[RMDB]
RNA sequence: GGGAACGACUCGAGUAGAGUCGAAAAGGAGGGUGCAAGCGUUACUCGGAAUCACUGGGCGUAAAGGGCGCGUAGGCGGAUUAUCAAGUCUCUUGUGAAAUCUAAUGGCUUAACCAUUAAACUGCUUAGCAAAUCACAUAUUCGUAUGUGAUUUGCUAAAAGAAACAACAACAACAAC
Reactivity to DMS in 0.01 (KOAc 150mM, MgCl2 10mM, bicine 150mM(pH8.5), 24C), signal-to-noise 3, nucleotides 027 to 126: g000g040a070g010g000g030u010g000c050a110a120g000c080g020u040u010a060c030u000c040g020g000a100a060u010c190a140c090u010g000g030g000c050g010u000a050a090a090g000g000g000c050g040c030g000u020a060g010g000c030g020g020a030u000u010a110u030c120a070a050g000u010c050u030c050u000u000g040u000g000a050a100a090u020c050u000a060a020u010g000g020c130u010u030a090a190c010c010a040u000u010a050a080a090c150u010g000c190u000u000
Reactivity to 2A3 in 0.01 (KOAc 150mM, MgCl2 10mM, bicine 150mM(pH8.5), 24C), signal-to-noise 5, nucleotides 027 to 126: g060g000a020g000g010g040u030g030c040a040a030g020c030g030u030u060a090c040u030c060g030g060a050a050u090c030a020c050u040g020g010g000c020g020u050a100a040a080g040g020g000c020g010c030g090u010a020g010g020c060g020g010a020u060u060a050u150c010a030a030g060u000c030u010c000u140u060g050u020g050a100a100a030u010c030u040a050a000u070g010g000c010u060u130a080a070c000c010a020u020u060a040a070a090c070u100g010c020u030u000